[RMDB]
Source: RMDB library OK2TST, as collected in RNAgym. An RNA of 177 nucleotides, treated with DMS and read out base by base. DMS adducts were read by reverse transcription with MarathonRT. DMS (dimethyl sulfate) methylates the pairing face of unpaired adenines and cytosines. Conditions: 150 mM KOAc, 10 mM MgCl2 and 150 mM bicine (pH 8.5), 24 C.

RNA sequence: GGGAACGACUCGAGUAGAGUCGAAAAUCGGCCAUGAUAUGGUGAUCUCGCAGAUCAUUCGCAUGGUCCAGGAUGCGCAGGCCGACAAGCUGCCCAUUCAGGCCAUGGUGGACAAGGUGACGGGCUACGUAUGGCAGUCGUUCGCGACUGCCAUACGAAAAGAAACAACAACAACAAC
Reactivity to DMS in 0.01 (KOAc 150mM, MgCl2 10mM, bicine 150mM(pH8.5), 24C), signal-to-noise 1, nucleotides 027 to 126: u010c040g030g010c000c000a020u010g010a140u000a140u000g000g010u040g000a000u010c000u010c300g030c220a140g020a000u000c020a100u020u000c110g000c000a010u000g000g000u000c010c020a020g010g010a060u000g040c300g000c000a050g000g010c020c010g020a190c190a040a300g010c070u010g010c000c020c000a060u010u010c040a170g000g010c000c040a070u000g000g000u000g010g010a040c010a030a190g040g010u000g010a040c010g000g000g000c090u000a080